[RMDB]
RNA sequence: GGGAACGACUCGAGUAGAGUCGAAAAGACGAGCAGGCUGAUAAUCUUGUGCAGUAUGCAUGCUCGUAACUCCAGCGCACAAGUGGACGCACAAGAUUUUAAUCCAGCAUAGCGCAGGAGCCGCAGACAGCAUGGCUCAGUUCGCUGAGCCAUGCUGAAAAGAAACAACAACAACAAC
Reactivity to DMS in 0.01 (KOAc 150mM, MgCl2 10mM, bicine 150mM(pH8.5), 24C), signal-to-noise 1, nucleotides 027 to 126: g030a000c010g000a010g020c010a000g000g000c020u000g000a100u050a060a020u000c040u000u000g050u000g000c060a300g020u020a100u020g040c020a120u020g000c000u000c040g020u000a000a060c050u000c050c000a030g010c050g000c010a150c130a130a140g000u000g010g030a100c060g010c090a070c010a010a010g000a060u050u020u060u020a090a090u050c030c010a010g000c100a130u050a170g010c020g050c010a070g000g010a020g030c050c030g000c210a240g000a270
Reactivity to 2A3 in 0.01 (KOAc 150mM, MgCl2 10mM, bicine 150mM(pH8.5), 24C), signal-to-noise 1, nucleotides 027 to 126: g010a000c000g000a000g000c000a000g060g000c000u010g000a160u100a180a040u000c000u000u000g050u000g000c010a020g020u160a040u080g020c070a030u000g000c000u000c000g020u000a010a000c000u000c010c000a060g020c020g000c000a010c000a140a160g150u040g150g010a040c020g010c000a000c000a010a000g000a040u020u020u000u170a150a110u060c000c000a000g030c030a150u080a070g010c000g040c000a000g050g000a000g000c000c020g020c020a000g070a100

Source information: Structure probing data (DMS and 2A3) for a 177-nucleotide construct. For 2A3 the reverse transcriptase was SuperScript II with manganese. For DMS, 1,471 sequencing reads were counted. Source: RMDB library OK1LIB, as collected in RNAgym. The reactions ran in a buffer of 150 mM KOAc, 10 mM MgCl2 and 150 mM bicine (pH 8.5), at 24 C.